Structure probing data (2A3) for a 207-nucleotide construct. Values are in units of 0.01, from 0 to 300, in steps of 10. Source: RMDB library OK3TST, as collected in RNAgym. The RNA was probed in 150 mM KOAc, 10 mM MgCl2 and 150 mM bicine (pH 8.5) at 24 C.
RNA sequence: GGGAACGACUCGAGUAGAGUCGAAAAUUUUCUACCUAUCAGCAACUCCUAUCUGCUCCACUUUCAGAAUAUAUGUAGAAUCUGACCCUUACUUUCUGUCUCAGUCUAAGAAAGCAACAUUUUAUAUCUGGAAAAUUGCAGUUACUUCCUCACUGCCGUCGCGAAAUAUUUUCGAAUAUUUCGCGACAAAAGAAACAACAACAACAAC
Reactivity to 2A3 in 0.01 (KOAc 150mM, MgCl2 10mM, bicine 150mM(pH8.5), 24C), signal-to-noise 2, nucleotides 027 to 156: u050u050u050u000c010u040a080c030c000u120a130u130c030a000g120c020a120a050c000u040c000c000u060a090u030c020u040g020c010u030c040c000a100c010u050u170u070c040a010g030a170a020u070a030u010a060u130g110u070a040g020a080a080u070c060u060g070a090c060c000c000u010u020a030c000u010u080u050c020u020g090u030c010u000c130a080g050u010c060u090a120a000g020a060a010a000g050c000a020a060c000a030u020u120u190u060a070u030a060u110c070u050g010g000a020a040a060a130u140u140g000c000a010g000u010u030a040c040u130u000c020c040u030c060a020c040u130g050c040c060